RNA sequence: GGGAACGACUCGAGUAGAGUCGAAAAGAUAUGGACGUAGAGCGAUAAGAACUUCUCGGAAACGAGAAAGUUCUUUUGACGCUUGAAGUCCUAAGUCAAAACUGAAGGUGGUUCGCCACCUUCAGAACUUGCUAUAGAUCUUCGGAUCUAUAGCAAGAAAAGAAACAACAACAACAAC
Reactivity to DMS in 0.01 (KOAc 150mM, MgCl2 10mM, bicine 150mM(pH8.5), 24C), signal-to-noise 5, nucleotides 027 to 126: g010a020u000a260u000g000g010a010c000g010u000a300g010a010g000c000g010a150u000a010a010g010a010a010c000u000u000c000u000c000g010g010a060a060a100c010g000a010g000a010a010a030g020u000u000c000u000u010u000u010g020a160c070g020c000u000u000g000a140a300g000u000c000c000u010a010a070g000u000c010a100a060a100a210c000u010g010a020a000g000g020u000g010g010u000u010c260g010c000c000a000c000c000u000u000c000a000g000a030a100
Reactivity to 2A3 in 0.01 (KOAc 150mM, MgCl2 10mM, bicine 150mM(pH8.5), 24C), signal-to-noise 2, nucleotides 027 to 126: g030a000u030a020u090g000g000a000c010g020u110a020g000a010g020c010g040a100u050a300a040g000a000a000c000u000u010c010u000c000g020g040a040a060a030c010g010a000g040a020a000a000g000u000u000c010u000u000u010u050g010a010c010g000c010u010u010g110a010a000g000u000c000c000u000a010a000g010u000c010a020a010a180a190c010u010g000a000a000g020g000u010g010g030u030u130c200g080c030c000a020c000c000u000u000c000a000g000a000a010
An RNA of 177 nucleotides, treated with DMS and 2A3 and read out base by base. The DMS profile rests on 5,803 reads. Conditions: 150 mM KOAc, 10 mM MgCl2 and 150 mM bicine (pH 8.5), 24 C. DMS adducts were read by reverse transcription with MarathonRT.